This 177-nucleotide RNA was probed chemically with DMS. For DMS, 821 sequencing reads were counted. DMS adducts were read by reverse transcription with MarathonRT. It was measured as part of the RMDB library OK2TRN. Values cover nucleotides 27 to 126.
RNA sequence: GGGAACGACUCGAGUAGAGUCGAAAACUUCUGGGAUAUUUGUUGUACAAACUGGGCAUUCCAAGUUUUGAUAUGUAGAAUUAGGUUUUCAAAAAGUAUGCUUGCAUAGAUUAGCACCAUUAUAGCCUGUCAUUCUGUAGUUCGCUACAGAAUGACAAAAAGAAACAACAACAACAAC
Reactivity to DMS in 0.01 (KOAc 150mM, MgCl2 10mM, bicine 150mM(pH8.5), 24C), signal-to-noise 1, nucleotides 027 to 126: c060u030u000c070u020g040g010g000a090u000a050u030u010u000g020u000u030g020u010a130c150a040a050a070c050u010g000g010g010c120a040u010u000c010c000a040a080g000u000u000u000u000g000a150u000a060u000g020u000a040g000a050a080u000u020a110g000g000u000u000u010u000c140a060a030a030a080a040g010u000a050u010g000c030u020u000g020c060a070u010a030g000a100u000u010a060g010c050a100c090c050a020u010u020a080u030a110g020c030c050